[RMDB]
RNA sequence: GGGAACGACUCGAGUAGAGUCGAAAACGCAUGGUUUGGAGAGAGUGGUGCAAUGUCUGUGGCAUAAAAGAUGUUGUUCUACAAGGCUUAAAAGCUUGUUGUUACGUGGGUGUGCAAACUGUUGAAGGUUUAGUUAUUGGUUCGCCAAUAACUAAACAAAAGAAACAACAACAACAAC
Reactivity to DMS in 0.01 (KOAc 150mM, MgCl2 10mM, bicine 150mM(pH8.5), 24C), signal-to-noise 5, nucleotides 027 to 126: c100g020c110a050u000g000g000u000u010u010g010g010a100g010a090g010a100g030u000g010g010u010g010c030a040a060u000g010u000c040u000g020u000g010g030c120a060u010a060a080a090a070g010a060u000g010u000u010g000u000u000c040u000a070c090a060a090g010g010c020u000u000a070a080a100a150g010c040u000u010g000u000u000g000u000u000a050c120g010u000g010g010g010u000g000u000g020c090a050a040a080c120u010g010u000u000g000a090a090g000
Reactivity to 2A3 in 0.01 (KOAc 150mM, MgCl2 10mM, bicine 150mM(pH8.5), 24C), signal-to-noise 3, nucleotides 027 to 126: c050g030c030a070u060g080g070u080u090u070g070g000a040g000a000g000a010g020u010g060g000u030g020c020a010a070u040g030u000c030u030g040u050g130g000c020a040u120a110a140a010a010g050a030u060g010u030u000g010u020u030c000u020a070c010a040a010g070g020c030u090u150a020a090a000a020g020c020u000u060g040u010u040g030u040u040a040c070g010u070g010g030g020u050g000u020g000c010a040a070a030c050u040g040u060u030g040a080a040g060
The data come from the RNA Mapping Database (RMDB), library 15KREP. This 177-nucleotide RNA was probed chemically with DMS and 2A3. DMS adducts were read by reverse transcription with MarathonRT. Conditions: 150 mM KOAc, 10 mM MgCl2 and 150 mM bicine (pH 8.5), 24 C.